[RMDB]
The record gives the reactivity of an RNA of 177 nucleotides to 2A3 and DMS. DMS adducts were read by reverse transcription with MarathonRT. The DMS profile rests on 2,097 reads. The 2A3 profile rests on 2,489 reads.
RNA sequence: GGGAACGACUCGAGUAGAGUCGAAAACAAAUGGAGCUGCCAUGUGGGAUAUUGCAACGAAUUUGGUACUGACUCUUCUAUUAACCGCUCUCUCCAAAUACGUACGUCGUUUCCUCAUGGAAACGUGAGCAUAUGCUCCAUUCGUGGAGCAUAUGCUAAAAGAAACAACAACAACAAC
Reactivity to 2A3 in 0.01 (KOAc 150mM, MgCl2 10mM, bicine 150mM(pH8.5), 24C), signal-to-noise 3, nucleotides 027 to 126: c000a000a070a070u160g070g000a040g050c020u010g000c000c040a050u060g040u100g080g040g010a040u040a020u180u140g010c030a020a030c050g060a050a030u050u030u040g040g030u080a080c040u030g040a040c010u020c000u110u040c030u070a180u160u130a090a030c040c010g000c040u000c010u010c010u000c030c000a010a080a060u120a040c080g060u010a040c080g020u050c010g000u030u000u010c040c010u060c070a130u150g000g000a030a050a010c040g010u040g030
Reactivity to DMS in 0.01 (KOAc 150mM, MgCl2 10mM, bicine 150mM(pH8.5), 24C), signal-to-noise 3, nucleotides 027 to 126: c040a080a090a100u010g010g020a100g040c060u010g000c010c030a050u010g030u000g020g010g020a130u010a040u010u010g000c070a100a040c060g010a090a050u000u010u000g010g030u010a100c080u000g000a050c050u000c020u000u000c090u020a100u000u010a080a070c090c070g000c050u000c020u000c020u000c020c030a040a030a050u000a090c110g000u000a080c240g010u000c010g040u000u000u000c000c020u010c170a130u000g020g010a040a010a030c090g060u010g010